[RMDB]
The data come from the RNA Mapping Database (RMDB), library 15KREP. This 177-nucleotide RNA was probed chemically with 2A3 and DMS. Conditions: 150 mM KOAc, 10 mM MgCl2 and 150 mM bicine (pH 8.5), 24 C. Values cover nucleotides 27 to 126.
RNA sequence: GGGAACGACUCGAGUAGAGUCGAAAAGCGUCUUUUCUUGCUUGGAUCCAUUUCUCGAGGACGUCCUCCCUUCCUCCCCUCCGGGUCCUCUUCGUCUCGGACUGGCUCAUCUUCGGAGUGGGGGCGGCACUGUAUAUACCUUCGGGUAUAUACAGUGAAAAGAAACAACAACAACAAC
Reactivity to 2A3 in 0.01 (KOAc 150mM, MgCl2 10mM, bicine 150mM(pH8.5), 24C), signal-to-noise 6, nucleotides 027 to 126: g000c020g060u110c130u120u290u110u050c100u220u260g010c010u020u030g040g010a040u090c040c010a100u080u120u050c020u010c010g010a020g070g070a170c010g010u010c010c000u030c010c000c000u050u060c000c000u000c000c000c010c000u000c000c000g030g000g000u020c010c010u030c030u050u040c010g100u020c060u030c130g010g020a010c010u000g000g010c030u030c070a180u030c060u180u110c020g000g000a000g000u060g010g010g000g000g000c040g030g010
Reactivity to DMS in 0.01 (KOAc 150mM, MgCl2 10mM, bicine 150mM(pH8.5), 24C), signal-to-noise 9, nucleotides 027 to 126: g000c020g020u020c170u010u010u010u010c120u010u010g020c020u000u000g010g010a080u010c040c030a160u010u010u000c010u000c010g010a020g000g000a140c050g010u000c030c040u010c010c010c030u000u000c010c000u000c000c000c030c010u000c010c010g020g010g000u000c020c030u000c090u000u000c050g010u010c130u020c090g020g000a030c050u000g010g010c300u000c080a110u010c090u000u010c040g010g000a030g020u000g010g010g010g000g020c300g000g000